Background
Structure probing data (2A3 and DMS) for a 177-nucleotide construct. The 2A3 profile rests on 1,770 reads. 2A3 adducts were read by reverse transcription with SuperScript II with manganese. Reactivities are given for positions 27 through 126. For DMS the reverse transcriptase was MarathonRT. For DMS, 1,194 sequencing reads were counted.
RNA sequence: GGGAACGACUCGAGUAGAGUCGAAAAGCUCAAGGAGCAGCUCAAGCUCUGCCUGGCCGCCGAGGGCUUCGGCAACCGCCUGUGCUUCCUGGAGCCCACUAGCAACGCGCAGGUCUGUGCAGGAGGGGCCCAACUAGACAUUCGUGUCUAGUUGGGCAAAAGAAACAACAACAACAAC
Reactivity to 2A3 in 0.01 (KOAc 150mM, MgCl2 10mM, bicine 150mM(pH8.5), 24C), signal-to-noise 1, nucleotides 027 to 126: g020c020u020c070a020a130g150g010a040g060c010a010g020c070u020c110a060a010g010c010u010c000u010g000c000c010u000g010g010c010c010g050c000c040g040a100g010g000g000c000u000u020c020g020g020c030a030a100c050c050g070c010c070u130g060u170g030c040u010u010c020c000u010g030g000a000g020c000c020c020a050c080u090a050g090c060a050a100c030g010c010g030c090a060g000g020u030c050u030g070u130g000c020a030g030g030a040g050g000g050
Reactivity to DMS in 0.01 (KOAc 150mM, MgCl2 10mM, bicine 150mM(pH8.5), 24C), signal-to-noise 2, nucleotides 027 to 126: g000c010u010c030a140a140g000g000a040g060c030a170g010c030u000c060a100a150g000c030u000c050u000g000c030c000u000g010g010c050c060g030c010c050g000a140g010g010g020c010u020u000c070g000g010c100a110a090c100c090g000c070c020u000g010u000g000c010u000u000c080c000u010g000g000a040g000c060c020c000a090c150u010a020g010c220a100a060c140g000c110g010c000a110g040g000u000c060u000g010u000g040c040a070g000g000a090g010g000g010